[RMDB]
RNA sequence: GGGAACGACUCGAGUAGAGUCGAAAAUCUAUGUACUCUUUAAUCCCUGGUGUCCGGAUGAUCAGGUGUAUCUGGAGGAUCGUGAUCAGCGCAAGGAGUACGUGAUGCACGAUACCACGCUCAUCUGAUUUACCUGGACGUUCGCGUCCAGGUAAAUAAAAGAAACAACAACAACAAC
Reactivity to 2A3 in 0.01 (KOAc 150mM, MgCl2 10mM, bicine 150mM(pH8.5), 24C), signal-to-noise 4, nucleotides 027 to 126: u030c030u030a150u120g010u030a090c050u030c010u060u080u190a100a130u090c020c010c010u000g000g030u080g030u000c020c000g030g020a020u040g020a020u090c010a010g000g010u010g010u040a040u000c030u040g050g060a080g060g020a090u030c000g010u000g030a110u090c070a010g020c010g000c070a070a150g170g010a050g120u060a020c010g000u010g000a060u160g030c000a010c010g000a010u030a270c000c000a040c080g010c000u040c020a060u050c010u040g040
Reactivity to DMS in 0.01 (KOAc 150mM, MgCl2 10mM, bicine 150mM(pH8.5), 24C), signal-to-noise 3, nucleotides 027 to 126: u000c070u010a040u020g010u020a060c030u010c040u000u000u000a140a130u000c030c000c010u010g020g010u000g010u010c010c030g000g000a050u000g000a000u000c000a030g020g020u000g020u020a050u040c060u010g000g030a040g040g000a090u000c000g000u000g010a040u030c130a130g020c080g010c150a120a090g000g010a080g030u000a100c000g010u010g010a130u030g030c010a000c020g000a050u010a080c020c010a110c080g010c100u000c030a010u000c010u000g000